RNA sequence: GGGAACGACUCGAGUAGAGUCGAAAAGAUAUGGAGUGGUACAGAGCUAACUACUCGGAAACGAGUAGCUAGCGACGAAGUACGUAACAUCUCCUAAGUCAAACACUAGGUCUUCGGACCUAGUGAAUCUUUCUAUAGAGUUCGCUCUAUAGAAAGAAAAAGAAACAACAACAACAAC
Reactivity to 2A3 in 0.01 (KOAc 150mM, MgCl2 10mM, bicine 150mM(pH8.5), 24C), signal-to-noise 4, nucleotides 027 to 126: g000a000u020a010u060g000g000a010g020u030g010g000u010a000c020a020g040a000g020c000u000a010a010c000u010a010c000u000c000g010g010a010a010a010c000g000a000g010u010a000g000c010u010a000g010c010g010a010c020g020a010a010g020u000a000c040g040u080a100a060c030a170u080c000u000c020c000u010a020a000g010u010c040a110a080a050c010a010c000u000a000g000g010u000c010u040u110c300g130g000a000c000c000u000a000g000u000g000a000a010
Reactivity to DMS in 0.01 (KOAc 150mM, MgCl2 10mM, bicine 150mM(pH8.5), 24C), signal-to-noise 8, nucleotides 027 to 126: g010a010u000a030u010g000g000a020g050u000g010g010u000a010c000a030g000a030g020c000u000a000a020c000u000a000c000u000c000g020g000a010a020a030c000g010a010g010u000a000g010c020u000a000g020c000g020a100c300g010a110a140g010u000a010c020g010u010a030a060c070a030u010c010u000c000c000u000a000a110g000u000c000a140a110a240c010a010c000u000a000g000g000u000c000u000u010c260g020g010a010c000c000u000a000g000u000g010a040a050
The record gives the reactivity of an RNA of 177 nucleotides to 2A3 and DMS. For 2A3 the reverse transcriptase was SuperScript II with manganese. Conditions: 150 mM KOAc, 10 mM MgCl2 and 150 mM bicine (pH 8.5), 24 C. For DMS the reverse transcriptase was MarathonRT.